[RMDB]
RNA sequence: GGGAACGACUCGAGUAGAGUCGAAAAUUUUGAGCUUUCGAGCUCAAAACAACUGGUGUCCCGACCACGAAAAACAGAUUUACACGAAGUGAAAGAUCGAAAGGGCCACCAUGUUCGCAUGGUGGAAGCAGAUAACAGUAUUCGUACUGUUAUCUGCAAAAGAAACAACAACAACAAC
Reactivity to DMS in 0.01 (KOAc 150mM, MgCl2 10mM, bicine 150mM(pH8.5), 24C), signal-to-noise 5, nucleotides 027 to 126: u010u000u010u000g000a010g010c000u000u000u000c150g010a010g010c000u010c000a000a000a010a030c140a090a100c200u000g010g010u000g000u000c010c010c010g010a120c020c010a140c170g010a030a040a020a050a080c100a110g010a070u010u000u000a260c070a070c050g000a100a080g010u000g010a090a110a150g000a040u000c020g000a050a090a100g010g000g000c000c020a010c000c000a000u000g000u000u010c200g030c000a010u000g000g020u000g010g020a050a040
Reactivity to 2A3 in 0.01 (KOAc 150mM, MgCl2 10mM, bicine 150mM(pH8.5), 24C), signal-to-noise 5, nucleotides 027 to 126: u020u020u000u000g000a010g000c010u060u030u190c260g070a010g000c000u000c000a000a010a010a010c020a030a050c100u110g000g000u020g030u020c000c000c000g010a010c000c020a040c060g130a120a050a020a010a000c070a070g030a030u040u090u210a060c100a020c120g200a300a040g010u040g060a100a070a040g030a030u040c040g040a120a050a030g070g030g000c010c000a000c010c000a010u000g020u020u040c240g000c070a000u000g010g010u000g000g010a010a010